[RMDB]
RNA sequence: GGGAACGACUCGAGUAGAGUCGAAAAGAUAUGGAUUGCCAUGGGAGCAACAGCUUUCUCGGAAACGAGAAAGACAUGCUUAGUGGUCAAUCCUAAGUCAAAAGCCCCAGCCUUCGGGCUGGGGCAACUUAAAGAUCUUGUUCGCAAGAUCUUUAAGAAAAGAAACAACAACAACAAC
Reactivity to 2A3 in 0.01 (KOAc 150mM, MgCl2 10mM, bicine 150mM(pH8.5), 24C), signal-to-noise 2, nucleotides 027 to 126: g000a010u110a040u180g000g010a030u020u030g020c030c020a020u080g180g300g000a030g010c040a000a160c040a040g070c000u020u030u000c000u020c000g020g030a090a100a070c010g000a020g020a000a000a000g000a000c010a020u040g000c010u010u020a010g010u020g050g060u180c000a000a020u020c000c000u000a070a010g030u000c000a150a110a100a180g020c000c000c000c000a000g020c000c020u140u290c300g240g030g040c030u070g040g000g000g050c000a000a000
Reactivity to DMS in 0.01 (KOAc 150mM, MgCl2 10mM, bicine 150mM(pH8.5), 24C), signal-to-noise 3, nucleotides 027 to 126: g010a040u010a300u010g000g000a000u000u000g020c020c000a010u000g000g020g000a020g000c010a050a110c290a180g000c000u010u000u000c010u000c010g000g010a120a120a200c000g010a020g010a010a000a010g000a040c130a120u000g010c010u010u010a300g010u000g000g020u000c010a010a020u010c000c000u010a010a110g000u020c010a090a110a250a300g000c020c000c000c010a000g000c010c000u010u020c300g040g020g060c000u010g000g000g010g020c010a020a010

An RNA of 177 nucleotides, treated with 2A3 and DMS and read out base by base. The 2A3 profile rests on 2,438 reads. 2A3 adducts were read by reverse transcription with SuperScript II with manganese. The RNA was probed in 150 mM KOAc, 10 mM MgCl2 and 150 mM bicine (pH 8.5) at 24 C. The DMS profile rests on 2,150 reads. It was measured as part of the RMDB library TTRDES.